[RMDB]
RNA sequence: GGGAACGACUCGAGUAGAGUCGAAAAUUAUAUAGCGUGUGCAAGACGCUGAACUUGCCAUGAUCUGGAACUUUAGUGCUGAGGUCCGAGUUCCAGAUCAUCAUUUCCGACCUCAGCACUAAUAUAAUCAAUAAGCGCGAUUCGUCGCGCUUAUUGAAAAAGAAACAACAACAACAAC
Reactivity to DMS in 0.01 (KOAc 150mM, MgCl2 10mM, bicine 150mM(pH8.5), 24C), signal-to-noise 1, nucleotides 027 to 126: u000u000a130u020a120u000a080g030c020g000u000g010u010g010c060a030a020g000a110c040g000c090u020g020a070a050c020u010u000g010c060c110a100u000g000a010u000c000u000g000g010a010a000c020u000u000u000a000g000u000g030c000u010g030a050g010g000u000c010c190g000a040g010u000u000c000c000a030g030a020u000c000a020u000c160a060u000u000u000c010c030g010a010c010c000u000c000a010g000c010a010c030u000a010a080u000a120u000a090a070
Chemical mapping of a 177-nucleotide RNA with DMS.
The DMS profile rests on 985 reads.